Source information: Structure probing data (DMS and 2A3) for a 177-nucleotide construct. The data come from the RNA Mapping Database (RMDB), library M2PK90. The RNA was probed in 150 mM KOAc, 10 mM MgCl2 and 150 mM bicine (pH 8.5) at 24 C. 2A3 is a SHAPE reagent: it acylates the 2'-hydroxyl of flexible nucleotides of all four kinds.

RNA sequence: GGGAACGACUCGAGUAGAGUCGAAAAAUACAGCGUAAUCGAGCGGAGGAAAACGGCACUCCGAAAAUCCGGUACGAUUAUGAUCCCACUGCGUCGACGCUAGAUGCAGAACCGCAUUGCCGAGGAAAGCUGUUAUGUAUUUCGAUACAUAACAGCUAAAAGAAACAACAACAACAAC
Reactivity to DMS in 0.01 (KOAc 150mM, MgCl2 10mM, bicine 150mM(pH8.5), 24C), signal-to-noise 6, nucleotides 027 to 126: a100u020a100c230a130g010c020g010u000a030a020u000c000g020a240g020c000g020g000a030g010g000a050a100a120a170c040g020g020c170a110c300u010c010c010g010a050a040a160a120u000c060c020g000g000u000a100c010g000a020u000u000a010u000g000a050u000c000c000c010a240c050u000g000c010g020u000c020g030a140c170g020c170u010a060g000a050u000g010c010a020g000a110a100c120c050g010c070a070u010u000g000c050c010g030a120g000g000a070a110
Reactivity to 2A3 in 0.01 (KOAc 150mM, MgCl2 10mM, bicine 150mM(pH8.5), 24C), signal-to-noise 5, nucleotides 027 to 126: a000u170a030c050a030g060c010g030u020a020a010u020c020g020a010g110c010g010g020a020g020g050a060a110a050a090c020g020g000c070a020c110u060c020c000g020a060a020a010a030u020c010c020g010g070u090a100c020g020a010u050u000a010u070g060a050u010c000c010c000a030c010u010g000c000g010u000c020g040a080c130g000c270u140a050g010a040u030g000c000a000g020a050a050c040c020g060c070a140u050u210g000c020c030g030a060g030g080a090a130